RNA sequence: GGGAACGACUCGAGUAGAGUCGAAAAAACCUCGUUCUUUAUUGGGGAGUACACUCGAGGAGUGGAAGGCGGGGAGGGCGGGGAGGAGUGUUACCCUACGGGAACUGCUGAGUGCCCCUGACGUCCAAUGCAUCGGUCUUCGGACCGAUGAAAAGAAACAACAACAACAAC
Reactivity to 2A3 in 0.01 (KOAc 150mM, MgCl2 10mM, bicine 150mM(pH8.5), 24C), signal-to-noise 3, nucleotides 027 to 129: a000a000c010c010u020c030g010u030u030c010u040u140u080a190u110u140g000g000g010g030a060g060u050a010c000a010c000u000c010g160a060g080g010a050g000u040g040g120a160a070g000g040c090g020g040g030g030a140g040g020g040c090g060g050g000g000a030g010g030a060g030u100g050u030u090a160c000c000c000u040a070c060g010g000g010a020a040c040u030g010c000u040g010a000g030u080g020c000c000c000c000u000g010a030c060g070u020c050c000a140a010u110g000
Reactivity to DMS in 0.01 (KOAc 150mM, MgCl2 10mM, bicine 150mM(pH8.5), 24C), signal-to-noise 4, nucleotides 027 to 129: a170a050c000c020u030c040g020u000u070c110u010u080u030a110u030u060g000g040g070g030a200g070u050a270c060a090c020u000c000g060a060g000g020a070g000u000g010g010a090a040g020g030c130g000g020g050g000a120g000g000g080c180g000g030g000g000a050g030g010a220g010u050g040u000u020a140c000c000c090u060a130c000g070g000g000a100a130c110u040g010c140u040g010a030g020u010g040c000c000c000c060u040g000a100c000g000u040c030c040a090a040u080g000
Structure probing data (2A3 and DMS) for a 170-nucleotide construct. The RNA was probed in 150 mM KOAc, 10 mM MgCl2 and 150 mM bicine (pH 8.5) at 24 C. Reactivities are given for positions 27 through 129. For DMS the reverse transcriptase was MarathonRT.